[RMDB]
RNA sequence: GGGAACGACUCGAGUAGAGUCGAAAAAGAGCCGGAUACGUCCGGCUCAACGGGGGAUACGUGUGGUGCCGUCCGCUCCCCAUAUGGCAUAACAAAUGCACCACACACUAGGCUACGGCCUAGUGAAAAAAGGUGUAUGUGUUCGCACAUACACCAAGUACCCUCUCUAGUUCGCUAGAGAGGGUACAAAAGAAACAACAACAACAAC
Reactivity to 2A3 in 0.01 (KOAc 150mM, MgCl2 10mM, bicine 150mM(pH8.5), 24C), signal-to-noise 1, nucleotides 027 to 156: a000g000a000g000c020c010g020g000a030u040a040c150g060u000c010c000g000g030c000u000c000a000a000c000g020g000g000g000g000a020u010a120c000g020u000g020u000g010g000u000g000c000c010g070u020c070c050g100c020u090c010c000c010c050a050u100a050u190g130g000c030a060u150a200a020c060a100a070a020u100g000c000a010c010c000a000c000a000c000a000c010u000a000g000g000c000u010a020c300g080g000c000c000u000a000g000u000g020a050a000a000a000a000a000g000g000u000g000u000a010u000g010u000g000u010u060c210g000c110a000c000a020u000a000c000a000c000c000a000a000